[RMDB]
RNA sequence: GGGAACGACUCGAGUAGAGUCGAAAAAUGGAGUAAUUAUGUCUACUCCCGACGGCACUGAAUAUCAGCACCCGUACAACGUCUGGAAAGCUGAAGGUUGUAUUAUCGGCUCCGGUGGCGCUGCCGUUACUAGUGGAACGUUCGCGUUCCACUAGUAAAAAGAAACAACAACAACAAC
Reactivity to DMS in 0.01 (KOAc 150mM, MgCl2 10mM, bicine 150mM(pH8.5), 24C), signal-to-noise 2, nucleotides 027 to 126: a080u010g010g000a010g040u010a030a120u000u010a120u010g010u000c140u000a030c020u000c000c000c110g000a050c040g010g010c070a060c050u000g010a100a120u000a080u000c020a020g010c070a080c040c020c050g030u000a070c100a060a030c090g020u010c050u000g000g010a070a060a130g020c090u010g000a070a070g020g000u010u010g000u000a060u010u000a080u000c090g010g000c040u020c030c020g010g000u000g000g020c060g010c060u010g020c020c030g020u000
Reactivity to 2A3 in 0.01 (KOAc 150mM, MgCl2 10mM, bicine 150mM(pH8.5), 24C), signal-to-noise 1, nucleotides 027 to 126: a000u120g040g000a040g020u030a040a130u160u250a180u250g110u070c020u030a010c010u000c000c000c000g020a020c060g000g080c020a010c080u090g040a200a090u040a070u270c020a000g000c040a080c000c000c000g030u060a040c010a060a020c080g040u030c000u040g000g070a090a140a070g060c040u040g010a010a000g070g000u070u080g110u080a230u120u060a150u240c020g010g040c070u060c070c020g000g110u100g010g000c020g000c040u040g000c000c050g040u010